[RMDB]
RNA sequence: GGGAACGACUCGAGUAGAGUCGAAAAGAGCCCACAGGCUAUAAUUGGAGCACGACCAUGGGUCCCCUGCCACCCUUUGCUGUGGCCCAGGGCGCCCAGCUCCUGAUCCGUCCUGUGGACAAACCAAUCAACACAACUUUAAUCUGCAACGUCACCAAUGCCCUAGGAGCUCGCCAGGCAGAACUGACCGUCCAGGUCAAAGAGGGACCUCCCAGUGAGCACUCAGGCAUGUCCCGUAACGCCAUCAUCUUCCUGGUUCUGGGAAUCUCACAACCUUCGGGUUGUGAAAAAGAAACAACAACAACAAC
Reactivity to DMS in 0.01 (KOAc 150mM, MgCl2 10mM, bicine 150mM(pH8.5), 24C), signal-to-noise 1, nucleotides 027 to 266: g000a180g030c070c000c000a000c000a000g000g000c000u000a090u010a160a200u100u000g000g020a000g000c000a030c300g030a200c140c150a300u000g000g040g000u000c300c000c000c000u000g000c000c000a010c030c070c130u000u030u020g050c210u000g030u000g030g000c180c300c070a000g000g050g000c300g020c020c020c000a030g010c020u000c000c020u000g000a070u000c090c020g020u030c000c010u000g030u000g000g000a030c030a070a090a280c040c050a140a050u030c150a060a120c120a080c280a040a110c060u000u020u000a100a180u000c060u000g030c100a080a070c080g000u000c010a010c090c070a060a010u000g000c000c010c050u000a190g000g000a110g000c030u030c060g060c000c080a060g000g050c080a030g040a120a150c090u020g000a040c000c030g000u020c180c080a210g000g000u020c030a000a060a100g000a090g020g040g020a160c060c150u020c040c020c000a160g020u010g010a040g020c010a160c000u000c160a030g000g000c020a080u000g000u000c010c010c000g000u020a110a040c120g020c000c050a100u010c040a080u000c110u000u000c000c000u000g000g000u010u000c050u000g010g070g080a080a100u040c160
Background: Structure probing data (DMS) for a 307-nucleotide construct. Values are in units of 0.01, from 0 to 300, in steps of 10. DMS adducts were read by reverse transcription with MarathonRT. It was measured as part of the RMDB library POS240.